RNA sequence: GGGAACGACUCGAGUAGAGUCGAAAAAAGGCUUAGGACGUGGACGUACCUUCUCAAAGGUCACCCUUCAGCUCACUACAUUAGUUACGAGGCAUCAGUUGGGUUAGCAGAUGAAAACAUCAGGCUGGCAGGUAGGUGGCCAGCAACAAAUGCUGGACGUAGUCAGGGUAUUCGUACCCUGACUACGAAAAGAAACAACAACAACAAC
Reactivity to DMS in 0.01 (KOAc 150mM, MgCl2 10mM, bicine 150mM(pH8.5), 24C), signal-to-noise 1, nucleotides 027 to 156: a020a040g000g080c000u000u000a070g000g010a050c060g060u000g010g020a060c040g000u000a080c030c040u010u000c090u010c120a040a100a030g020g020u000c030a100c000c000c060u010u010c020a020g000c010u000c060a190c040u010a040c060a100u000u030a120g000u020u000a150c040g020a140g020g000c030a060u000c000a080g050u110u010g000g040g000u000u010a090g040c030a060g000a040u010g030a080a100a030a130c070a070u010c060a110g000g050c110u010g010g060c000a040g000g050u020a030g020g050u000g030g000c000c050a080g000c030a010a050c100a050a050a100u010g000c040u010g030g020a300
Reactivity to 2A3 in 0.01 (KOAc 150mM, MgCl2 10mM, bicine 150mM(pH8.5), 24C), signal-to-noise 1, nucleotides 027 to 156: a000a000g060g020c010u040u010a010g040g000a040c010g040u070g020g060a080c010g050u130a130c070c030u110u020c170u060c110a150a140a000g010g000u020c020a030c000c020c000u060u060c030a050g000c030u050c060a060c050u150a030c020a170u170u190a080g040u090u040a080c090g030a060g040g000c030a060u020c030a060g130u000u050g080g010g000u030u100a040g000c020a010g000a080u050g100a070a050a010a070c000a050u120c000a000g000g070c010u000g010g010c030a020g110g060u100a000g000g030u030g040g000c000c000a000g030c000a000a050c050a030a180a010u180g000c010u000g010g010a010

The record gives the reactivity of an RNA of 207 nucleotides to DMS and 2A3.
The DMS profile rests on 2,183 reads.
Values cover nucleotides 27 to 156.